An RNA of 177 nucleotides, treated with 2A3 and DMS and read out base by base. For DMS the reverse transcriptase was MarathonRT.

RNA sequence: GGGAACGACUCGAGUAGAGUCGAAAACAUGUCAUUGAUCACAACAGCCCUUUCUUCCACAUGGCAGCGGAGACCCUUCUCCAGCAGGACUUUGAAUUAGUGGUGUUUUUAGAUGGCACAGUGGAGAGAUAGCUUUUACGUUCGCGUAAAAGCUAUCAAAAGAAACAACAACAACAAC
Reactivity to 2A3 in 0.01 (KOAc 150mM, MgCl2 10mM, bicine 150mM(pH8.5), 24C), signal-to-noise 3, nucleotides 027 to 126: c020a020u050g020u060c020a030u010u150g060a070u080c050a010c050a160a060c020a070g060c000c000c000u020u080u030c040u100u010c010c010a040c000a150u090g060g010c020a030g030c030g000g020a020g030a040c040c000c000u080u040c020u020c020c010a040g020c030a020g000g100a040c000u070u080u130g070a110a050u100u030a080g040u030g180g010u020g040u020u050u010u040u050a080g010a050u090g010g020c000a030c030a070g040u070g020g050a090g000a010
Reactivity to DMS in 0.01 (KOAc 150mM, MgCl2 10mM, bicine 150mM(pH8.5), 24C), signal-to-noise 4, nucleotides 027 to 126: c100a100u000g010u010c060a070u010u000g000a060u010c090a060c060a050a080c070a080g010c030c010c040u000u000u010c040u000u010c020c070a080c140a100u000g000g010c060a060g000c090g000g000a040g010a110c100c040c060u010u000c010u000c020c030a070g040c080a060g010g010a050c110u000u010u000g020a080a080u010u010a040g020u000g000g010u000g010u010u000u010u010u010a110g000a060u000g020g000c010a050c080a090g010u000g000g010a130g000a140

The data come from the RNA Mapping Database (RMDB), library OK2TST. The DMS profile rests on 4,002 reads. High 2A3 reactivity points to a flexible backbone, as in loops and unpaired stretches.